An RNA of 207 nucleotides, treated with 2A3 and read out base by base. Values cover nucleotides 27 to 156. The RNA was probed in 150 mM KOAc, 10 mM MgCl2 and 150 mM bicine (pH 8.5) at 24 C.
RNA sequence: GGGAACGACUCGAGUAGAGUCGAAAAGGGGUCACUCGGAACUAGCACAAGCUUUUGACGAGCUGAAGCCUCCACGGCUCGAUAAGCUUGUGAACUACUAGUUACGAGUGACGGAGGCACCCAAACUGUAUGUAGAACUUCGGUUCUACAUACAGAAGCUCUUUACGGUGUUCGCACCGUAAAGAGCAAAAGAAACAACAACAACAAC
Reactivity to 2A3 in 0.01 (KOAc 150mM, MgCl2 10mM, bicine 150mM(pH8.5), 24C), signal-to-noise 1, nucleotides 027 to 156: g090g000g000g000u000c010a000c000u000c000g000g020a040a010c000u000a020g020c030a000c010a010a000g000c020u170u300u300u150g250a190c130g000a010g000c050u060g080a220a030g020c000c000u000c020c030a050c010g030g000c000u000c060g050a110u100a240a090g000c000u010u010g020u050g010a010a000c060u240a000c000u000a080g000u000u010a010c020g000a010g000u000g000a000c000g010g030a000g010g010c050a090c000c000c020a010a040a020c030u000g000u000a000u000g000u000a000g030a000a000c020u100u130c300g020g000u000u000c000u000a000c000a000u000a000c000a000g000a000a020